Structure probing data (DMS and 2A3) for a 207-nucleotide construct. DMS adducts were read by reverse transcription with MarathonRT. It was measured as part of the RMDB library M2RFPK. The reactions ran in a buffer of 150 mM KOAc, 10 mM MgCl2 and 150 mM bicine (pH 8.5), at 24 C.
RNA sequence: GGGAACGACUCGAGUAGAGUCGAAAAACGCUUCACAAUGUGUGGCAAAGAAACAUUGUUUAUGCAAAGGCACUUCGCAAUGUGUGCUCAAACAUUGCUUAUUCAAACACGCUUCACAAUGUGCGACAAAACUUCACGGUCUUCGGACCGUGAAGAACAAACCCUAGGAGUUCGCUCCUAGGGUUUGAAAAGAAACAACAACAACAAC
Reactivity to DMS in 0.01 (KOAc 150mM, MgCl2 10mM, bicine 150mM(pH8.5), 24C), signal-to-noise 1, nucleotides 027 to 156: a170c070g000c080u000u000c080a060c000a040a030u000g040u010g000u010g010g000c010a100a110a130g020a210a050a030c020a010u000u000g030u010u010u000a060u020g040c060a050a130a140g030g000c000a020c010u010u010c120g000c160a190a050u000g010u000g000u000g000c000u000c050a090a170a050c050a060u000u000g000c000u020u000a070u000u000c050a200a050a060c050a050c000g000c040u000u010c160a080c070a030a040u000g050u000g010c040g010a160c090a040a030a040a090c020u010u000c000a000c010g000g010u000c030u000u000c300g100g010a010c010c010g020u000g000a000a010g010a050a110
Reactivity to 2A3 in 0.01 (KOAc 150mM, MgCl2 10mM, bicine 150mM(pH8.5), 24C), signal-to-noise 4, nucleotides 027 to 156: a000c060g010c050u060u050c010a010c010a070a130u020g020u000g010u000g040g000c030a110a070a060g070a070a110a010c060a060u030u010g020u060u060u080a100u100g020c050a060a060a070g090g000c000a000c010u110u100c100g010c140a090a110u130g040u010g020u000g030c040u060c140a090a080a010c040a040u010u000g000c000u040u090a080u050u060c070a050a040a020c080a010c090g010c010u040u040c030a010c000a050a080u050g010u030g020c030g080a040c070a020a100a050a050c000u000u010c010a010c000g000g000u000c000u020u070c200g110g000a000c010c010g000u000g000a000a000g000a000a000